[RMDB]
RNA sequence: GGGAACGACUCGAGUAGAGUCGAAAAAGCGUGUAGUUUAUGAUGUGGUGUUUAACGGGCGUUGUUUUCUCGACGCAAGCGGCGCCCAGGCCACAUGUGUGUAUGUUUGGCGAUAAUUUCAUAAACAUGAUACUCAGGCACGCCAAUGCCGACGCUACUAUUUGCACCGUUUCGACGGUGCAAAUAGAAAAGAAACAACAACAACAAC
Reactivity to 2A3 in 0.01 (KOAc 150mM, MgCl2 10mM, bicine 150mM(pH8.5), 24C), signal-to-noise 2, nucleotides 027 to 156: a010g000c010g000u000g040u090a160g020u080u050u000a010u050g060a020u050g020u010g010g070u040g150u080u180u250a210a120c170g000g000g000c060g000u000u010g010u000u050u000u080c110u070c110g160a130c080g000c040a010a000g010c000g000g000c000g010c000c010c000a000g050g020c030c000a010c060a000u000g100u050g000u020g040u050a090u100g100u040u010u030g050g000c020g050a040u070a170a170u210u140u020c030a020u080a020a060a000c000a020u130g030a060u160a040c050u040c160a070g030g030c000a020c000g000c000c000a010a010u030g000c000c000g020a010c000g030c020u030a040
Reactivity to DMS in 0.01 (KOAc 150mM, MgCl2 10mM, bicine 150mM(pH8.5), 24C), signal-to-noise 1, nucleotides 027 to 156: a030g040c010g050u010g030u000a050g010u000u010u000a090u000g000a040u020g030u000g020g010u000g000u000u000u000a090a110c140g010g040g000c000g010u010u000g010u000u000u000u000c110u000c050g050a240c160g010c090a020a050g020c020g000g000c060g030c000c000c000a150g010g010c020c030a040c010a050u000g000u010g030u010g030u000a030u000g010u000u000u020g000g050c040g020a180u020a110a260u000u020u000c030a110u010a060a050a010c040a100u000g020a110u000a010c070u000c040a070g000g010c000a020c040g020c010c050a040a100u000g000c060c010g040a070c010g020c040u020a130